The data come from the RNA Mapping Database (RMDB), library OK3TST. An RNA of 207 nucleotides, treated with 2A3 and DMS and read out base by base. The reactions ran in a buffer of 150 mM KOAc, 10 mM MgCl2 and 150 mM bicine (pH 8.5), at 24 C. Values cover nucleotides 27 to 156.
RNA sequence: GGGAACGACUCGAGUAGAGUCGAAAAAUCAGAAGCACGCAGAGAUAUUAAGAUAGUUAUGGGCUGGGUAUGGUGGCUCAUGCCUGCAAUCCCAACACUGUGGGAGGCCAAGGCAGGAGGAUCGAUUGAGCCCAGGAGUUCAAAACCAGCCUGGGCAAAAUUAAUGCAUCUUCGGAUGCAUUAAUUUAAAAGAAACAACAACAACAAC
Reactivity to 2A3 in 0.01 (KOAc 150mM, MgCl2 10mM, bicine 150mM(pH8.5), 24C), signal-to-noise 1, nucleotides 027 to 156: a020u070c040a000g030a040a010g020c030a020c080g020c040a010g040a010g040a040u090a050u220u170a070a040g010a090u050a060g050u140u070a060u130g020g020g000c010u040g060g000g010u040a060u110g040g080u010g020g000c010u030c060a050u050g000c000c000u000g000c030a040a090u020c000c020c010a000a070c160a070c170u180g010u050g120g000g000a010g000g000c050c020a010a010g040g040c000a000g000g020a020g000g000a060u080c070g010a010u060u130g090a000g000c000c000c000a000g000g000a040g000u190u220c050a040a000a080a040c000c000a000g040c030c010u010g000g000g050c000a030
Reactivity to DMS in 0.01 (KOAc 150mM, MgCl2 10mM, bicine 150mM(pH8.5), 24C), signal-to-noise 1, nucleotides 027 to 156: a080u000c030a090g010a190a140g000c030a030c050g060c070a050g020a090g000a190u000a100u000u000a050a150g000a120u000a040g000u010u000a070u000g070g010g000c010u000g020g020g040u010a070u010g000g050u000g010g020c020u000c030a010u000g020c010c010u030g000c040a060a170u000c000c000c020a080a100c100a090c080u000g020u010g000g010g010a060g040g000c050c040a020a050g020g020c030a030g010g000a080g030g060a120u000c040g020a180u000u000g000a160g010c000c020c020a040g000g010a190g000u000u000c100a070a080a090a100c050c010a070g000c020c010u000g000g030g010c030a060